[RMDB]
RNA sequence: GGGAACGACUCGAGUAGAGUCGAAAAGAUAUGGACGUCUCUUGAAGUGCGACGAAGCAAUCUCGGAAACGAGAUUGCAGAGCACCAAGAGGACGUCCUAAGUCAAACGAAUCCUUCGGGAUUCGAAGAAAGUAGAGUACUUCGGUACUCUACUUUCAAAAGAAACAACAACAACAAC
Reactivity to DMS in 0.01 (KOAc 150mM, MgCl2 10mM, bicine 150mM(pH8.5), 24C), signal-to-noise 6, nucleotides 027 to 126: g010a040u000a300u010g000g020a010c000g020u000c000u000c000u000u000g010a300a180g030u000g000c000g000a200c280g010a120a130g000c010a010a000u000c000u000c000g020g010a100a090a170c000g000a010g000a000u000u000g000c010a020g000a130g020c000a010c030c010a010a190g010a010g020g000a010c000g010u000c000c000u000a000a080g010u000c040a110a130a300c020g000a020a000u000c000c010u000u000c250g030g010g010a010u000u000c000g010a070a110
Reactivity to 2A3 in 0.01 (KOAc 150mM, MgCl2 10mM, bicine 150mM(pH8.5), 24C), signal-to-noise 5, nucleotides 027 to 126: g030a020u070a040u200g000g010a000c000g000u010c010u010c010u080u020g190a300a200g060u000g020c210g160a300c050g030a300a010g000c000a000a000u000c010u000c010g000g020a050a050a050c010g000a000g000a010u000u000g000c010a000g000a010g000c010a010c020c000a010a010g020a120g030g050a010c000g010u000c000c000u000a010a000g010u000c020a060a030a110c020g010a000a000u000c020c000u040u110c300g110g000g010a000u000u020c010g000a060a080